RNA sequence: GGGAACGACUCGAGUAGAGUCGAAAAGAUAUGGACGUAUCCGUCCAGGGCGCAGAUACUCGGAAACGAGAGUAGCCUAGGACGGAGUACGUCCUAAGUCAAACAAGAAUGCUUCGGCAUUCUUGAAGUACCUCAGGAGGUUCGCCUCCUGAGGUACAAAAGAAACAACAACAACAAC
Reactivity to 2A3 in 0.01 (KOAc 150mM, MgCl2 10mM, bicine 150mM(pH8.5), 24C), signal-to-noise 1, nucleotides 027 to 126: g000a000u110a030u160g010g010a000c010g000u000a010u040c000c000g010u040c020c000a020g010g030g000c070g100c110a020g030a130u150a090c030u030c000g010g040a060a130a060c010g000a020g000a010g060u050a070g000c010c000u020a070g000g000a010c000g010g000a030g030u010a000c000g000u000c000c000u010a000a000g010u000c000a010a000a190c000a000a020g010a010a010u020g000c020u070u200c300g220g000c000a010u020u000c030u000u010g000a030a040
Reactivity to DMS in 0.01 (KOAc 150mM, MgCl2 10mM, bicine 150mM(pH8.5), 24C), signal-to-noise 2, nucleotides 027 to 126: g010a050u000a300u000g000g000a000c000g060u000a060u000c020c000g010u000c010c000a300g000g000g000c000g000c120a170g000a030u000a030c000u000c000g000g000a100a040a200c030g010a040g000a040g010u000a120g020c010c000u000a220g010g000a020c010g000g000a040g050u000a020c000g000u000c010c000u000a000a050g000u000c020a090a080a270c010a010a030g010a040a000u000g000c000u010u010c260g000g000c000a000u000u010c000u000u020g000a070a030